RNA sequence: GGGAACGACUCGAGUAGAGUCGAAAAACAUAGGCCAUGCUUACGAGCAUGGCCUAUGACGAAUCUCAAGCACUCAAGCAUUCUACUUCUAUUGCAACACUGAGGAGCUUACGAGCUCCUCAGUGAAAAAAGAGAGUAAUGUUCGCAUUACUCUCAACAUAUGCAGUUGGUUCGCCAACUGCAUAUGAAAAGAAACAACAACAACAAC
Reactivity to 2A3 in 0.01 (KOAc 150mM, MgCl2 10mM, bicine 150mM(pH8.5), 24C), signal-to-noise 3, nucleotides 027 to 156: a030c000a000u000a000g000g000c000c000a010u010g050c020u120u080a120c220g100a030g000c000a010u000g010g000c000c000u000a000u000g000a010c000g040a040a040u000c000u000c030a020a040g100c040a060c070u110c070a020a100g020c040a120u100u100c040u110a150c070u160u100c030u150a140u090u160g050c080a120a040c010a050c010u000g010a000g010g000a000g000c000u050u040a070c260g020a000g000c020u010c000c000u010c000a000g000u000g010a000a000a000a000a000a000g000a000g000a000g000u000a000a000u020g050u110u110c200g000c090a000u000u000a000c000u000c000u000c000a000a010
Reactivity to DMS in 0.01 (KOAc 150mM, MgCl2 10mM, bicine 150mM(pH8.5), 24C), signal-to-noise 2, nucleotides 027 to 156: a200c010a030u000a010g030g010c000c020a010u000g030c020u010u000a170c270g030a110g010c000a030u000g000g010c010c000u000a000u000g030a140c030g000a060a090u000c030u010c020a100a170g020c100a060c060u010c030a060a100g020c040a110u010u000c020u000a060c060u000u010c060u000a060u010u000g020c020a090a190c000a020c010u000g010a040g010g010a010g020c000u000u000a070c260g020a070g000c020u000c000c000u000c030a000g010u010g000a000a010a060a100a080a050g010a020g020a040g030u000a020a010u020g030u000u000c300g040c020a060u000u000a000c000u000c000u000c000a020a110